[RMDB]
This 177-nucleotide RNA was probed chemically with 2A3 and DMS. Source: RMDB library M2PK50, as collected in RNAgym. For DMS the reverse transcriptase was MarathonRT. For 2A3 the reverse transcriptase was SuperScript II with manganese. The reactions ran in a buffer of 150 mM KOAc, 10 mM MgCl2 and 150 mM bicine (pH 8.5), at 24 C.
RNA sequence: GGGAACGACUCGAGUAGAGUCGAAAACUCGGUUAAUUCGUUAACCGAGACUUCUUAAACAUCUUUUCAACACAUAGAUGGAAAAUAUUCAAAGAUGUUCGAAUGCGAUAAACUUCGGUUUAUCGAACCUAACAUUCCCUUUCGAGGGAAUGUUAGGAAAAGAAACAACAACAACAAC
Reactivity to 2A3 in 0.01 (KOAc 150mM, MgCl2 10mM, bicine 150mM(pH8.5), 24C), signal-to-noise 3, nucleotides 027 to 126: c010u000c000g010g000u000u020a010a020u060u060c100g030u030u010a010a000c000c000g000a000g000a010c010u030u030c010u040u110a070a040a000c000a000u010c010u030u070u080u110c090a120a050c030a020c030a240u200a180g150a240u070g010g120a000a030a090a080u230a100u070u100c030a000a000a040g020a020u040g030u030u040c080g120a180a090u160g060c010g000a000u000a000a010a000c000u030u070c240g050g000u000u000u010a010u000c000g000a020a010
Reactivity to DMS in 0.01 (KOAc 150mM, MgCl2 10mM, bicine 150mM(pH8.5), 24C), signal-to-noise 2, nucleotides 027 to 126: c010u000c000g000g010u000u000a030a030u000u000c110g030u010u010a000a000c000c000g010a000g010a030c090u000u000c020u000u000a130a040a040c000a020u000c000u000u000u000u030c180a060a080c150a090c110a090u000a120g010a110u000g000g000a060a090a060a160u010a090u000u020c100a030a020a030g010a020u000g000u000u000c160g010a100a110u000g000c000g000a020u000a010a000a000c000u000u020c180g030g030u000u000u000a010u000c000g000a020a160